Notes
This 177-nucleotide RNA was probed chemically with 2A3 and DMS. For 2A3, 2,898 sequencing reads were counted. 2A3 adducts were read by reverse transcription with SuperScript II with manganese.
RNA sequence: GGGAACGACUCGAGUAGAGUCGAAAAGCCCCGUAACUUUGGAAGAAGGGGUGCCAGCUAUGUGAAUAGCUGGUCUCAGUGACUAGGGGGGCCCGACUGUUUAAUAAAAACAUAGCUCUCUGCUAGCUACCAUCGAUAUCUUCGGAUAUCGAUGGUAAAAAGAAACAACAACAACAAC
Reactivity to 2A3 in 0.01 (KOAc 150mM, MgCl2 10mM, bicine 150mM(pH8.5), 24C), signal-to-noise 5, nucleotides 027 to 126: g010c000c000c000c000g060u120a130a130c070u160u130u240g180g060a100a020g030a040a060g010g000g010g000u010g020c000c000a010g010c000u010a000u000g130u050g090a130a030u010a010g000c000u000g010g010u000c000u000c000a070g040u030g040a090c010u030a040g000g010g000g000g010g000c010c000c010g040a040c040u010g100u010u030u050a270a230u190a110a160a020a030a010c020a010u050a020g000c000u000c010u020c000u060g060c000u020a010g000c000
Reactivity to DMS in 0.01 (KOAc 150mM, MgCl2 10mM, bicine 150mM(pH8.5), 24C), signal-to-noise 2, nucleotides 027 to 126: g000c010c000c000c020g000u010a130a070c030u010u020u050g000g030a170a040g030a160a150g000g000g000g040u010g010c000c000a020g010c000u010a010u000g000u080g010a250a000u000a000g000c000u000g010g000u010c000u010c030a110g010u020g000a160c050u000a030g000g000g000g000g030g020c000c070c140g000a200c110u010g020u010u000u000a120a110u060a040a090a040a020a030c040a020u010a090g000c010u010c000u020c020u000g010c050u000a030g010c060